[RMDB]
RNA sequence: GGGAACGACUCGAGUAGAGUCGAAAAGCGUACUACGAUGUUCUAACUUGCGUUGAAAUCAUUCUUUGUAUAAUCUCCCAAAUAGGAGAUUAUGGGGUGAUGGAGCAAGUUUCUACAUCGUAUCGCAAAGUGGCAGGGCGUUCGCGCCCUGCCACAAGAGGAAAUAGCAGUUCGCUGCUAUUUCCUCAAAAGAAACAACAACAACAAC
Reactivity to 2A3 in 0.01 (KOAc 150mM, MgCl2 10mM, bicine 150mM(pH8.5), 24C), signal-to-noise 2, nucleotides 027 to 156: g000c010g020u050a050c050u010a010c040g010a020u020g000u050u010c050u010a000a000c020u000u000g000c000g250u190u050g020a050a010a010u010c010a020u090u060c050u110u060u240g130u100a000u000a000a000u000c000u090c000c030c030a090a300a170u190a150g000g000a000g000a000u000u000a010u010g010g000g010g010u000g000a010u000g000g000a000g000c000a000a000g000u000u010u000c010u010a000c000a000u010c000g010u000a020u170c010g000c000a030a040a070g000u040g000g000c020a000g110g030g000c180g190u300u300c300g030c010g000c050c000c020u020g010c000c000a000c000a000a000